[RMDB]
Chemical mapping of a 177-nucleotide RNA with 2A3 and DMS. Conditions: 150 mM KOAc, 10 mM MgCl2 and 150 mM bicine (pH 8.5), 24 C. As a SHAPE reagent, 2A3 marks flexible, mostly unpaired nucleotides at the ribose 2'-OH. The data come from the RNA Mapping Database (RMDB), library M2PK90.

RNA sequence: GGGAACGACUCGAGUAGAGUCGAAAAGUAGUGCUCGAGAGGGAGGCUGUCUCGCUGAGCUUUUAGAUCUUCUGAUCUUUCCCUCCUCCAUAUCGCUUAUGCGUCAAGCGAUAGACGCAUAAUUAAACAGAGGAAGAGUGUUCGCACUCUUCCUCUGAAAAGAAACAACAACAACAAC
Reactivity to 2A3 in 0.01 (KOAc 150mM, MgCl2 10mM, bicine 150mM(pH8.5), 24C), signal-to-noise 2, nucleotides 027 to 126: g020u070a000g100u050g130c060u080c100g100a080g000a030g060g030g000a040g040g050c080u090g110u060c010u020c040g000c030u070g040a010g050c000u040u010u010u010a010g000a000u040c020u270u110c160u300g000a020u040c000u040u020u000c010c010c000u000c000c000u000c000c020a060u090a050u110c060g050c080u040u000a000u030g020c000g020u000c040a050a090g120c060g170a100u050a070g010a000c000g000c000a000u000a000a010u120u170a090a030a040
Reactivity to DMS in 0.01 (KOAc 150mM, MgCl2 10mM, bicine 150mM(pH8.5), 24C), signal-to-noise 2, nucleotides 027 to 126: g020u000a070g010u000g020c080u010c030g000a040g030a220g010g000g000a100g010g010c050u000g010u000c010u000c020g010c070u000g010a150g000c020u000u000u000u000a030g010a000u000c000u000u010c300u000g010a020u000c010u000u000u000c010c000c010u000c030c000u000c010c030a080u010a060u000c060g020c230u000u000a010u000g010c020g020u000c000a080a110g010c230g000a090u000a070g000a010c010g000c000a000u000a020a020u000u010a050a070a140